An RNA of 177 nucleotides, treated with 2A3 and read out base by base. Values cover nucleotides 27 to 126. 2A3 is a SHAPE reagent: it acylates the 2'-hydroxyl of flexible nucleotides of all four kinds. The RNA was probed in 150 mM KOAc, 10 mM MgCl2 and 150 mM bicine (pH 8.5) at 24 C.
[RMDB]
RNA sequence: GGGAACGACUCGAGUAGAGUCGAAAACAUUAUCCUCUCUUGUUCAACUUCCGAAAAUAUCAAACGGCUCGCUAAUCCAGCAAGAGAAGCAAAGUCAAAGUUGACUGAUGAAGGGACUCUAAUGGCGCCAUGCGCAGUCCUUCGGGACUGCGCAUGGAAAAGAAACAACAACAACAAC
Reactivity to 2A3 in 0.01 (KOAc 150mM, MgCl2 10mM, bicine 150mM(pH8.5), 24C), signal-to-noise 2, nucleotides 027 to 126: c120a050u130u020a030u130c000c010u010c000u000c010u080u250g090u290u020c000a040a020c010u170u040c030c010g110a110a040a080a150u130a020u070c080a040a080a170c040g000g000c000u040c020g000c060u000a110a000u010c090c000a050g100c070a210a000g070a030g000a000a030g040c000a000a040a100g050u030c100a090a000a120g000u000u020g030a000c000u000g160a230u160g070a100a020g100g000g060a060c020u000c030u150a000a000u010g000g030c020g020